[RMDB]
RNA sequence: GGGAACGACUCGAGUAGAGUCGAAAAUAAGUGCUCAGUAAGUGUUUUAGGACUUAAAGGGUGAUCUGGUGGCCACCUUAGAUUAUUUGGAAGACUUUUUAGCAGAAGUGAGAAUGGCUUCGUUAAUGUUGCAUAUGACUAUGGGUUAAUUUGUAAGUAAAAGUACGAAUUUCGAUUCGUACUUUUAAAAAGAAACAACAACAACAAC
Reactivity to DMS in 0.01 (KOAc 150mM, MgCl2 10mM, bicine 150mM(pH8.5), 24C), signal-to-noise 3, nucleotides 027 to 156: u010a060a110g010u010g010c020u010c040a090g000u000a110a100g020u010g020u000u000u000u000a140g030g000a050c050u000u010a050a120a090g010g010g040u000g000a080u030c010u000g020g040u000g020g030c050c030a020c060c010u010u000a090g010a120u010u000a060u000u000u000g010g010a090a130g000a090c040u010u000u000u010u000a100g020c040a090g020a060a070g010u000g010a120g000a070a120u000g020g010c040u000u000c040g050u000u000a060a100u010g000u010u000g000c000a100u010a060u000g010a090c040u000a080u000g000g030g020u000u000a040a120u000u000u000g010u000a040a140g050
Reactivity to 2A3 in 0.01 (KOAc 150mM, MgCl2 10mM, bicine 150mM(pH8.5), 24C), signal-to-noise 2, nucleotides 027 to 156: u120a030a010g040u020g060c010u000c050a020g070u120a110a020g010u020g050u090u040u070u190a060g000g020a040c040u050u130a150a050a030g080g000g000u010g060a060u130c030u060g030g000u030g000g010c040c010a020c010c000u020u010a030g020a080u130u100a090u160u160u120g060g020a110a030g030a080c000u150u090u020u080u130a010g010c050a020g010a110a020g020u030g040a070g020a080a040u110g030g000c010u000u010c000g020u000u080a060a020u080g040u030u040g030c080a060u020a050u160g060a060c010u020a070u110g060g000g020u020u040a060a090u140u040u100g000u050a040a060g090
Record summary: The record gives the reactivity of an RNA of 207 nucleotides to DMS and 2A3. 2A3 adducts were read by reverse transcription with SuperScript II with manganese. For DMS, 6,851 sequencing reads were counted.